The data come from the RNA Mapping Database (RMDB), library OK2TRN.
An RNA of 177 nucleotides, treated with DMS and 2A3 and read out base by base.
The reactions ran in a buffer of 150 mM KOAc, 10 mM MgCl2 and 150 mM bicine (pH 8.5), at 24 C.
For DMS, 1,288 sequencing reads were counted.
For 2A3 the reverse transcriptase was SuperScript II with manganese.
The 2A3 profile rests on 1,199 reads.
[RMDB]
RNA sequence: GGGAACGACUCGAGUAGAGUCGAAAAGUGGAUAUGGCAGCUCUUCAGAGCAGGCAGGGCAUUCAGGUAGAAGAUGCUGCAUGUCAUGUUCUCCCCAAGACAGUCCUAGUGCCUUGGCUCUCUGGUGCCGCUACCAAUACUUCGGUAUUGGUAGCGGAAAAGAAACAACAACAACAAC
Reactivity to DMS in 0.01 (KOAc 150mM, MgCl2 10mM, bicine 150mM(pH8.5), 24C), signal-to-noise 1, nucleotides 027 to 126: g080u010g020g000a080u000a000u010g020g020c020a010g000c100u010c070u020u000c030a070g000a010g060c160a040g010g000c000a030g010g010g000c010a040u000u020c190a060g020g020u010a080g000a120a060g010a090u010g020c060u000g030c070a090u010g000u000c030a020u000g000u000u000c020u000c020c000c030c100a110a150g020a080c170a040g010u000c020c000u000a030g000u010g000c020c020u000u000g000g000c010u010c020u000c010u000g020g000u010g010
Reactivity to 2A3 in 0.01 (KOAc 150mM, MgCl2 10mM, bicine 150mM(pH8.5), 24C), signal-to-noise 1, nucleotides 027 to 126: g150u080g040g030a020u020a050u100g140g000c040a030g000c030u050c040u300u120c030a010g000a000g090c040a000g040g000c020a000g010g020g060c040a000u040u070c170a030g070g000u150a040g070a260a030g050a060u120g020c060u030g000c060a050u050g020u060c000a000u000g070u020u010c030u060c030c030c000c010a050a060g060a060c090a040g100u040c000c000u040a000g000u020g040c000c020u030u020g050g020c030u000c000u000c010u010g010g020u040g020